The data come from the RNA Mapping Database (RMDB), library M2RFPK. The record gives the reactivity of an RNA of 207 nucleotides to 2A3. High 2A3 reactivity points to a flexible backbone, as in loops and unpaired stretches. Reactivities are given for positions 27 through 156. Conditions: 150 mM KOAc, 10 mM MgCl2 and 150 mM bicine (pH 8.5), 24 C.

RNA sequence: GGGAACGACUCGAGUAGAGUCGAAAAGGGACGCCUUUAGAAGAAGAGGCUAGGUGGUAUUCCGGUGUGCGAUACUUGGUAAUAUGUAACGCUAAUUGCAUAAGAUUGUAGGACGGAAUUUACAGUCAAAACGGUCCUGCGUUCGCGCAGGACCGAAGACAAUCGGUACGUUCGCGUACCGAUUGUCAAAAGAAACAACAACAACAAC
Reactivity to 2A3 in 0.01 (KOAc 150mM, MgCl2 10mM, bicine 150mM(pH8.5), 24C), signal-to-noise 1, nucleotides 027 to 156: g020g000g010a020c060g000c020c000u100u030u120a140g040a200a000g010a050a020g000a100g070g000c090u060a030g020g080u070g030g020u070a060u050u000c030c020g030g000u060g020u040g000c050g010a030u030a140c000u020u050g000g020u110a060a060u070a150u100g000u020a040a010c020g040c060u050a130a000u090u070g000c040a010u060a110a060g020a060u000u110g020u040a020g000g060a030c070g000g000a020a010u000u060u090a060c020a020g050u000c020a020a090a020a020c010g000g000u000c010c000u020g000c010g000u030u060c190g000c000g000c060a000g000g000a000c000c000g000a000a010